Source information:
An RNA of 207 nucleotides, treated with 2A3 and read out base by base. For 2A3 the reverse transcriptase was SuperScript II with manganese. It was measured as part of the RMDB library M2RFPK.
RNA sequence: GGGAACGACUCGAGUAGAGUCGAAAACGGUCCUGCCAUGAGACCGUAACGAGGACAUGUCGCCACGAAUGGCGUCGGGGAGCCGGCAGCUUACCCCAAGGAUGAGCGCCUAAUGCCGGUACCCGGGUAUACGCUACCCCGUUCGCGGGGUAGCGAAAGAGAGUUUAAGUUUCGACUUAAACUCUCUAAAAGAAACAACAACAACAAC
Reactivity to 2A3 in 0.01 (KOAc 150mM, MgCl2 10mM, bicine 150mM(pH8.5), 24C), signal-to-noise 1, nucleotides 027 to 156: c040g000g010u000c020c050u010g180c080c070a080u150g020a040g000a110c000c000g000u030a000a080c030g040a030g120g050a040c050a120u250g070u230c030g000c000c000a030c160g180a090a200u080g000g000c000g010u000c000g020g000g000g000a030g250c000c000g030g000c040a000g020c000u000u040a030c010c050c030c090a050a100g020g050a220u110g020a040g020c040g030c010c010u090a140a080u050g030c010c000g010g000u010a000c000c010c030g000g010g040u160a100u010a020c000g000c000u000a000c000c000c050c000g070u070u040c140g020c050g040g000g000g130u020a000g060c000g020a000a000